[RMDB]
RNA sequence: GGGAACGACUCGAGUAGAGUCGAAAAAGAGACAGGGUCUUGCUCUGUUGCCCAGGCUGGAGCACGGUGUUGCUGUCAUAGCUCACUUGCAGCCUCUACCUCUAGGGUUCAAACAAUCCUCCUGCUUCAGCCUCCUGGUUAGGUGGGACCAUAGGUACGCUACGCUACUAUUCGUAGUAGCGUAGCGAAAAGAAACAACAACAACAAC
Reactivity to 2A3 in 0.01 (KOAc 150mM, MgCl2 10mM, bicine 150mM(pH8.5), 24C), signal-to-noise 2, nucleotides 027 to 156: a030g110a010g040a000c050a050g020g010g000u110c140u190u300g060c050u040c000u010g050u090u070g030c070c030c010a000g010g000c000u000g020g000a010g000c040a020c160g000g000u040g010u040u040g000c010u030g110u170c120a130u130a130g000c020u010c080a120c000u020u080g000c010a000g050c020c020u030c010u080a050c030c010u050c040u060a070g040g010g010u060u100c100a110a140a160c070a030a070u020c000c010u000c010c000u020g000c010u000u000c000a000g000c000c000u020c030c050u060g010g110u140u180a030g050g000u060g010g000g000a000c000c050a080u020a050g110g020u150a040